An RNA of 177 nucleotides, treated with 2A3 and read out base by base.
Reactivities are rounded to 0.1 and cut off at 0 and 3.
Source: RMDB library RFM100, as collected in RNAgym.

[RMDB]
RNA sequence: GGGAACGACUCGAGUAGAGUCGAAAACCGAGUCAUAGUUAAGGCAAGCUAUGAGUGCAUGUAUUUACAUGUAUUGCAAAUCCACAUAUUCGUUGUGUUUGCACCACAACAAUAUGAGUGGGACACUACACCCGGGAUACUUCGGUAUCCCGGGUGUAAAAGAAACAACAACAACAAC
Reactivity to 2A3 in 0.01 (KOAc 150mM, MgCl2 10mM, bicine 150mM(pH8.5), 24C), signal-to-noise 1, nucleotides 027 to 126: c000c000g000a010g020u000c000a000u010a000g000u000u110a200a000g300g050c070a050a060g010c030u000a000u010g000a000g020u070g000c000a000u000g030u150a150u100u240u190a110c020a020u080g070u080a070u000u120g030c000a000a050a070u010c000c000a000c000a030u000a000u030u030c030g000u000u000g000u000g040u000u040u090g110c040a020c050c000a000c000a000a000c000a000a000u000a000u000g050a070g050u050g000g000g000a000c000a000c180u000